[RMDB]
RNA sequence: GGGAACGACUCGAGUAGAGUCGAAAAAUGUCUAUCUGCAGUUAGUAAUUCUGGAGCUCAUUUAGAGUUAGGGCUUAGAGUUCUUGAUUUGGGAGCCAUCAAUGAACAAGCAGUUGAAACCAUGAGCACACAAAAGGUUGCCCGAGGAGGCUGGGCAGCCCUUUUAGGUAUUCGUACCUAAAAGGGCAAAAGAAACAACAACAACAAC
Reactivity to DMS in 0.01 (KOAc 150mM, MgCl2 10mM, bicine 150mM(pH8.5), 24C), signal-to-noise 1, nucleotides 027 to 156: a060u000g010u010c060u000a060u000c000u000g030c060a110g020u000u040a080g040u020a040a040u000u000c010u000g050g020a120g010c010u000c020a130u000u000u010a090g010a100g020u000u000a050g010g010g030c020u000u010a120g000a160g040u000u000c020u000u000g010a120u000u000u000g010g040g010a110g030c000c050a050u000c040a030a060u030g010a010a070c040a080a170g010c030a060g030u000u000g010a100a090a060c060c030a120u010g000a160g030c060a060c020a050c040a050a020a010a000g000g040u010u000g010c000c040c000g010a090g010g020a100g030g030c020u000g000g000g080c020a150
Reactivity to 2A3 in 0.01 (KOAc 150mM, MgCl2 10mM, bicine 150mM(pH8.5), 24C), signal-to-noise 4, nucleotides 027 to 156: a000u100g020u020c020u030a110u020c020u060g030c030a040g030u050u090a040g030u140a060a070u100u050c030u070g070g040a020g000c020u020c030a120u140u150u210a070g010a030g070u050u130a080g020g020g010c000u020u050a030g010a010g100u030u000c000u020u030g020a050u060u020u080g060g000g010a030g040c030c000a020u030c010a010a090u100g020a010a020c010a080a030g010c030a020g030u050u060g090a050a040a000c030c000a040u040g030a010g000c020a010c000a000c000a040a070a100a030g020g010u030u050g020c020c000c010g000a030g030g030a020g030g010c060u060g010g010g000c010a020

The record gives the reactivity of an RNA of 207 nucleotides to DMS and 2A3. For 2A3, 2,796 sequencing reads were counted.